[RMDB]
RNA sequence: GGGAACGACUCGAGUAGAGUCGAAAAAGACCAGGUCAUUACGAUGACCUGGUCAAGGCAUAUCCCUUGUUCUCGUGGCUGUCUGGUUAGGAUGGCCGAAAGCACUACCUAUACGUAGGUAGUGCAACAGACGUACUAUUUUCGAAUAGUACGUCUGAAAAGAAACAACAACAACAAC
Reactivity to DMS in 0.01 (KOAc 150mM, MgCl2 10mM, bicine 150mM(pH8.5), 24C), signal-to-noise 7, nucleotides 027 to 126: a080g010a000c000c000a000g000g020u000c000a010u000u010a120c220g020a050u000g010a010c000c000u010g000g010u000c000a010a040g020g010c240a150u020a140u000c010c000c000u000u000g010u000u000c040u000c040g020u020g010g020c000u000g010u000c000u000g010g030u030u050a130g000g010a020u000g010g010c000c010g020a020a070a110g000c000a010c010u000a010c000c000u010a030u010a100c210g040u000a000g000g000u000a000g020u000g000c000a010a070
Reactivity to 2A3 in 0.01 (KOAc 150mM, MgCl2 10mM, bicine 150mM(pH8.5), 24C), signal-to-noise 9, nucleotides 027 to 126: a000g000a000c000c000a000g010g000u000c000a000u030u090a040c240g140a040u020g000a000c000c000u000g020g000u000c000a000a000g020g000c070a050u050a140u180c010c010c000u010u060g040u030u010c060u020c070g080u110g020g000c000u000g020u000c010u030g300g110u190u130a100g040g030a000u010g000g000c010c000g000a010a010a000g000c000a000c000u000a000c000c000u020a020u020a070c260g100u010a040g000g000u000a010g000u000g000c000a000a000